[RMDB]
RNA sequence: GGGAACGACUCGAGUAGAGUCGAAAAGGCUGUUGAAAUACAUUCCUGUGCCGGAAAUACAGUGUGUAUGGAGGUCUCAAUGGCUCGGAAGUGCCAGCAAACCGGCGUAGAUAUUAGCAGACGUAUGAUAGGAUGCAUCCGUUCGCGGAUGCAUCAACAAUGGAUUCUUGUUCGCAAGAAUCCAUUGAAAAGAAACAACAACAACAAC
Reactivity to DMS in 0.01 (KOAc 150mM, MgCl2 10mM, bicine 150mM(pH8.5), 24C), signal-to-noise 4, nucleotides 027 to 156: g020g030c010u000g000u000u000g020a110a120a060u000a040c040a080u000u000c300c020u000g030u000g010c010c020g020g010a060a070a110u000a060c030a070g020u000g020u000g010u000a040u000g020g010a120g010g020u000c020u000c090a080a140u000g010g030c010u000c020g020g040a150a160g020u000g010c010c000a050g020c080a020a060a130c010c000g000g040c040g030u010a000g010a150u000a060u000u000a080g010c040a040g000a080c030g010u000a070u000g010a170u000a150g020g000a020u000g000c000a000u000c000c000g030u000u020c290g030c030g000g000a030u000g020c000a000u000c000a020a050
Reactivity to 2A3 in 0.01 (KOAc 150mM, MgCl2 10mM, bicine 150mM(pH8.5), 24C), signal-to-noise 6, nucleotides 027 to 156: g030g000c010u030g020u300u030g060a010a020a010u040a010c010a040u060u110c060c010u030g020u040g010c010c020g030g030a080a110a010u240a030c020a010g020u010g010u000g010u040a020u020g010g020a010g010g030u000c020u010c050a080a170u060g010g000c020u040c040g030g060a110a050g030u030g080c000c010a050g050c060a090a020a020c010c010g000g020c010g000u070a040g060a140u070a110u210u170a060g060c040a010g050a110c050g120u150a070u170g090a080u100a090g180g010a000u010g010c000a000u020c000c000g020u050u060c180g000c010g080g000a000u000g000c000a000u000c000a000a000